[RMDB]
RNA sequence: GGGAACGACUCGAGUAGAGUCGAAAAAUAUUGCGCAGGUUGUCAUAGCUGACACCUUACAGGAAACUCCUGUUGUGCCUGAUACUGUUGAAGUCCCACCGCAAGUGGUGAAACUUCCGUCUGCACCGUGUAUGUGUAACUUCGGUUACACAUACACAAAAGAAACAACAACAACAAC
Reactivity to DMS in 0.01 (KOAc 150mM, MgCl2 10mM, bicine 150mM(pH8.5), 24C), signal-to-noise 2, nucleotides 027 to 126: a040u010a100u000u000g010c080g010c110a010g010g010u020u000g010u000c030a060u000a220g000c250u020g010a030c000a030c010c040u000u010a050c030a010g020g000a070a080a170c230u010c000c000u000g000u000u000g000u000g010c020c100u000g000a030u000a050c140u000g020u000u000g010a020a020g000u000c050c030c000a020c050c030g060c180a100a280g000u000g020g000u000g010a010a040a010c000u010u000c010c110g000u010c060u000g020c060a070c140c300
Reactivity to 2A3 in 0.01 (KOAc 150mM, MgCl2 10mM, bicine 150mM(pH8.5), 24C), signal-to-noise 2, nucleotides 027 to 126: a000u090a020u040u170g000c070g000c000a000g000g030u140u110g010u070c030a040u070a120g050c120u040g040a000c000a010c020c010u000u050a020c000a000g000g030a050a180a070c050u060c040c000u010g050u020u110g050u040g000c010c030u010g030a040u040a130c040u090g110u210u060g000a000a020g030u010c000c010c000a000c010c010g060c110a070a060g020u020g020g090u140g020a160a040a030c010u020u010c030c020g030u020c030u050g000c000a030c020c060

Conditions: 150 mM KOAc, 10 mM MgCl2 and 150 mM bicine (pH 8.5), 24 C. This 177-nucleotide RNA was probed chemically with DMS and 2A3. The DMS profile rests on 1,706 reads.